[RMDB]
RNA sequence: GGGAACGACUCGAGUAGAGUCGAAAACCCGGCACACUCGCGGCACACCCCCCAACGUCGUGCAGACCGACCCACGGACCUGGCUCCUGGUGGCUACCGGGCUGUCGGGGGUGGCGCAGGCCCGGGGCGGUAUGGGAGGGUUCGCCCUCCCAUACCGAAAAGAAACAACAACAACAAC
Reactivity to DMS in 0.01 (KOAc 150mM, MgCl2 10mM, bicine 150mM(pH8.5), 24C), signal-to-noise 2, nucleotides 027 to 126: c010c000c010g080g010c100a040c060a300c080u000c060g020c070g000g000c060a170c050a110c030c020c010c010c010c040a070a120c120g020u010c090g000u010g000c080a020g000a040c030c020g020a090c090c020c020a090c150g010g000a020c000c060u000g010g000c080u000c010c010u020g020g030u010g040g020c030u000a110c120c110g000g000g020c010u000g020u010c070g060g000g000g020g020u000g010g010c110g020c040a070g000g000c090c010c010g000g010g010g010